[RMDB]
RNA sequence: GGGAACGACUCGAGUAGAGUCGAAAAUUAAAAGAUGUAGUACGGCCGCCACUGAAGGACGGGUCCUCUCCGAAAGGAGAGUUGAGUAGAGUGUGAGCAGGACCGGGUGCUAGUCACUGGUGAAAAACCCAUCAUAGAAGUUCGCUUCUAUGAUGGGAAAAGAAACAACAACAACAAC
Reactivity to 2A3 in 0.01 (KOAc 150mM, MgCl2 10mM, bicine 150mM(pH8.5), 24C), signal-to-noise 2, nucleotides 027 to 126: u120u070a050a060a010a060g100a070u110g030u140a010g050u050a030c010g010g000c000c000g000c030c000a050c030u050g030a090a010g040g020a060c050g000g000g040u020c000c010u000c000u000c000c000g050a130a020a020g010g000a000g000a000g010u020u030g010a010g000u060a030g000a050g020u090g000u010g000a040g010c020a060g010g060a030c030c020g040g010g020u020g000c000u010a020g030u070c020a000c100u050g060g030u090g040a110a080a000a000a010
Reactivity to DMS in 0.01 (KOAc 150mM, MgCl2 10mM, bicine 150mM(pH8.5), 24C), signal-to-noise 4, nucleotides 027 to 126: u010u010a070a080a120a120g000a050u000g000u000a040g020u000a070c070g020g000c030c020g010c020c030a040c030u000g010a100a090g000g010a040c040g010g000g010u010c080c000u000c000u000c000c000g010a100a060a190g000g000a020g000a020g000u010u010g010a140g010u000a060g010a080g010u000g020u000g010a100g020c030a060g020g010a070c040c030g000g000g000u000g020c020u000a070g000u010c010a060c080u010g020g000u000g000a060a060a050a100a120